[RMDB]
Chemical mapping of a 177-nucleotide RNA with DMS and 2A3. The RNA was probed in 150 mM KOAc, 10 mM MgCl2 and 150 mM bicine (pH 8.5) at 24 C. For 2A3 the reverse transcriptase was SuperScript II with manganese. DMS adducts were read by reverse transcription with MarathonRT. The 2A3 profile rests on 8,336 reads.
RNA sequence: GGGAACGACUCGAGUAGAGUCGAAAAGAUAUGGAUUCCUCUUGAGUCCUUGUCUCGGAAACGAGACUAGGACAAUGAUGGAGGGAAUCCUAAGUCAAAGGCAUAGUGUGUUCGCACACUAUGCCAAUCUUCCUUUUCUGUUCGCAGAAAAGGAAGAAAAAGAAACAACAACAACAAC
Reactivity to DMS in 0.01 (KOAc 150mM, MgCl2 10mM, bicine 150mM(pH8.5), 24C), signal-to-noise 2, nucleotides 027 to 126: g010a000u010a020u000g010g010a010u000u000c000c010u000c010u000u010g000a010g030u000c000c000u000u000g000u000c000u010c000g020g000a010a010a040c000g000a020g010a010c000u000a020g020g010a010c010a190a300u010g010a090u000g000g010a020g000g010g010a010a000u000c000c000u000a010a050g000u000c020a080a110a120g010g000c000a000u000a000g010u000g020u000g000u010u030c270g020c020a010c000a000c000u010a000u000g000c000c010a000a000
Reactivity to 2A3 in 0.01 (KOAc 150mM, MgCl2 10mM, bicine 150mM(pH8.5), 24C), signal-to-noise 2, nucleotides 027 to 126: g010a000u020a010u040g000g000a000u000u000c000c010u040c000u000u020g030a010g000u000c000c010u000u010g000u000c010u010c010g000g000a010a000a000c010g010a000g010a010c020u030a010g010g020a000c000a020a180u000g000a000u000g020g020a030g060g060g030a010a030u000c000c010u010a010a000g000u000c030a080a110a120g000g000c000a000u000a010g000u000g010u010g010u060u080c280g090c110a000c000a000c000u000a000u010g020c000c000a000a000